[RMDB]
RNA sequence: GGGAACGACUCGAGUAGAGUCGAAAAGAUAUGGACGAUUCGUGACAUGCGUGAGAUCGGAAACGAUCUACACGCAACAGCACGAUCGUCCUAAGUCAAAACUUUUAUGUGUUCGCACAUAAAAGAAUCAGAUUGGAUACUUCGGUAUCCAAUCUGAAAAAGAAACAACAACAACAAC
Reactivity to DMS in 0.01 (KOAc 150mM, MgCl2 10mM, bicine 150mM(pH8.5), 24C), signal-to-noise 2, nucleotides 027 to 126: g010a030u010a150u010g000g020a010c000g000a010u010u020c010g030u000g040a060c100a120u010g020c000g040u000g010a050g000a010u000c000g040g000a020a040a100c000g030a020u000c000u000a080c000a010c000g030c000a060a020c260a220g000c000a000c020g030a020u000c000g010u000c000c000u010a000a030g000u000c000a210a170a120a150c020u000u000u000u000a000u000g010u000g000u000u010c250g010c000a000c000a000u000a000a010a000a000g000a190a200
Reactivity to 2A3 in 0.01 (KOAc 150mM, MgCl2 10mM, bicine 150mM(pH8.5), 24C), signal-to-noise 2, nucleotides 027 to 126: g000a000u030a020u050g020g000a010c020g020a060u240u200c050g060u000g030a130c170a300u300g010c000g010u010g010a000g000a010u020c000g000g060a020a000a010c030g000a000u020c020u070a170c000a000c000g000c000a010a000c010a000g000c000a000c000g000a010u000c000g010u000c000c000u010a000a000g030u000c000a000a000a160a210c010u000u010u010u000a030u030g070u010g030u040u050c200g120c090a000c010a000u030a010a010a000a000g040a010a120